[RMDB]
RNA sequence: GGGAACGACUCGAGUAGAGUCGAAAAUUUUCUAUUCUGCAAACACAAGAGGAAGUUUACUACGUUUCUCAAUGAUUACACAGACUUGUAGAAAACACCACUAUUACACUAGUCUGUUUCCCUGUUAGAAGGAAGUCUAGUUUAUUGGAAAGGAAGCAUGAGGAAUUUAUUUCGAUAAAUUCCUCAUAAAAGAAACAACAACAACAAC
Reactivity to 2A3 in 0.01 (KOAc 150mM, MgCl2 10mM, bicine 150mM(pH8.5), 24C), signal-to-noise 4, nucleotides 027 to 156: u040u030u020u050c010u040a090u110u000c020u050g000c040a070a110a080c050a030c030a150a090g010a010g040g030a030a040g000u040u150u110a120c110u040a040c050g140u010u030u030c000u010c010a060a100u100g040a060u090u140a060c060a010c010a070g060a070c030u080u090g030u030a020g060a070a070a030a030c040a020c030c020a030c050u070a060u120u090a030c010a000c020u000a000g000u000c020u010g110u050u100u070c010c000c010u020g040u060u030a070g030a130a040g040g030a030a020g010u000c010u020a000g010u020u150u040a090u110u100g060g020a060a050a030g140g060a040a020g200c040
Reactivity to DMS in 0.01 (KOAc 150mM, MgCl2 10mM, bicine 150mM(pH8.5), 24C), signal-to-noise 3, nucleotides 027 to 156: u000u010u000u010c000u000a070u010u000c000u010g020c010a110a200a120c070a100c050a080a170g020a110g010g010a040a050g000u000u000u000a120c150u000a080c060g010u010u000u010c010u000c020a080a120u010g010a130u000u000a080c120a100c030a040g020a050c300u010u010g020u000a040g020a080a040a060a080c050a130c070c040a080c060u000a090u000u000a080c060a060c070u010a010g020u000c020u000g020u010u000u000c010c000c000u000g010u000u000a090g020a080a060g000g000a030a060g010u000c020u000a060g020u000u000u000a030u020u020g000g010a080a060a170g000g000a080a090g010c190